An RNA of 177 nucleotides, treated with DMS and 2A3 and read out base by base. The RNA was probed in 150 mM KOAc, 10 mM MgCl2 and 150 mM bicine (pH 8.5) at 24 C. The 2A3 profile rests on 9,558 reads. The DMS profile rests on 14,274 reads.
RNA sequence: GGGAACGACUCGAGUAGAGUCGAAAAGGAAAGCGCGCGAAUUGGAAACCAGGGCGCCAUAUUACGCGCGCAAGGAAUUGGGCGUUGGUUUUUUGGAAGGAUUAGAUAAUUACCCGGCGCCCGUCAAACAUAAUACGUUAUUCGUAACGUAUUAUGUAAAAGAAACAACAACAACAAC
Reactivity to DMS in 0.01 (KOAc 150mM, MgCl2 10mM, bicine 150mM(pH8.5), 24C), signal-to-noise 7, nucleotides 027 to 126: g000g010a130a160a160g010c000g030c000g020c000g010a050a040u010u000g010g000a060a070a100c070c090a060g000g010g010c210g010c000c000a010u010a020u000u000a100c010g010c000g010c000g020c010a030a040g000g000a090a080u000u010g020g000g000c020g020u000u000g010g010u000u000u000u000u000u000g010g010a200a100g000g010a130u010u000a090g010a210u010a020a020u000u000a050c100c010c020g000g010c010g010c010c000c000g010u000c060a060a080
Reactivity to 2A3 in 0.01 (KOAc 150mM, MgCl2 10mM, bicine 150mM(pH8.5), 24C), signal-to-noise 5, nucleotides 027 to 126: g060g010a160a050a010g000c000g000c000g000c020g010a020a040u030u020g020g010a080a040a060c080c050a120g040g050g020c040g010c000c010a070u120a030u220u090a110c010g000c000g000c000g020c000a000a010g050g020a060a090u230u210g000g000g000c020g000u000u010g020g000u010u020u010u010u050u070g090g030a070a060g070g060a050u090u140a050g020a050u100a080a030u050u030a040c010c000c000g020g000c010g010c000c000c000g000u000c000a020a040